[RMDB]
RNA sequence: GGGAACGACUCGAGUAGAGUCGAAAAAAAGCUUGCUAUGGCAAAUAUAGCGAAAUCUCUCCACUGCCUUCUGUCCACCAACAUUUAGUGCCAGCCUAGGCACAACUUGUCCUGGUCCAAGUCCUUAUUCUGCUUGCCCCAACUUACCUGCAGACACGAAUAGGUACUACUUCGGUAGUACCUAUUCAAAAGAAACAACAACAACAAC
Reactivity to 2A3 in 0.01 (KOAc 150mM, MgCl2 10mM, bicine 150mM(pH8.5), 24C), signal-to-noise 1, nucleotides 027 to 156: a000a000a000g030c030u050u060g010c000u000a000u040g080g000c050a070a260a060u130a040u030a010g010c000g040a010a090a080u060c080u000c010u030c020c020a030c050u030g020c000c000u040u020c040u060g060u050c060c010a020c020c000a060a050c010a080u070u110u130a050g010u010g000c000c010a050g020c100c060u080a090g010g000c020a010c000a010a010c020u030u020g030u030c000c000u050g020g000u030c040c000a040a010g040u030c040c000u120u070a110u110u040c030u040g040c030u030u050g030c010c010c020c000a030a070c020u050u080a060c020c020u040g000c000a020g040a080c030a020c090
Reactivity to DMS in 0.01 (KOAc 150mM, MgCl2 10mM, bicine 150mM(pH8.5), 24C), signal-to-noise 2, nucleotides 027 to 156: a070a040a080g000c040u000u010g040c010u000a080u000g020g030c040a100a070a120u000a070u010a060g020c010g010a030a080a080u000c050u000c010u010c010c010a100c060u010g000c040c020u010u000c060u010g030u000c010c050a070c040c030a010a070c070a070u000u000u000a090g040u000g010c050c000a120g030c090c080u000a110g020g010c010a060c030a040a030c070u010u010g010u000c000c040u050g000g020u000c050c030a020a080g000u020c040c030u000u010a130u000u000c010u020g000c000u000u000g000c000c000c030c020a090a050c050u000u010a070c030c010u000g040c060a070g020a070c090a130c100

The record gives the reactivity of an RNA of 207 nucleotides to 2A3 and DMS. For DMS the reverse transcriptase was MarathonRT. In probing experiments dimethyl sulfate is read out at A N1 and C N3, which are open when not base-paired. It was measured as part of the RMDB library OK3TST. 2A3 adducts were read by reverse transcription with SuperScript II with manganese.